[RMDB]
RNA sequence: GGGAACGACUCGAGUAGAGUCGAAAACGGAGCCUGCCAGCCAACUCUUUGCCGUGCAUUUUUGCCAAUAUUAAGAGCUAGCUUCACUGCUUUAUUGGUCACUUUUUAUAAUUAUAAACAUAGUAGACCUGCCCUAUGGUUUCGACCAUAGGGCAGGAAAAGAAACAACAACAACAAC
Reactivity to 2A3 in 0.01 (KOAc 150mM, MgCl2 10mM, bicine 150mM(pH8.5), 24C), signal-to-noise 2, nucleotides 027 to 126: c000g000g000a000g080c000c000u010g010c010c000a000g000c000c000a060a010c040u000c000u090u080u070g010c020c000g040u100g030c010a000u030u030u050u150u090g010c000c000a050a050u130a080u120u230a190a090g020a000g000c040u080a040g010c000u040u060c120a040c130u000g050c000u070u160u160a130u030u150g040g000u080c000a080c070u000u100u000u160u000a130u050a260a220u300u300a240u130a070a020a000c000a000u120a000g030u000a010g080a060
This 177-nucleotide RNA was probed chemically with 2A3. The 2A3 profile rests on 570 reads. The reactions ran in a buffer of 150 mM KOAc, 10 mM MgCl2 and 150 mM bicine (pH 8.5), at 24 C. It was measured as part of the RMDB library OK1LIB.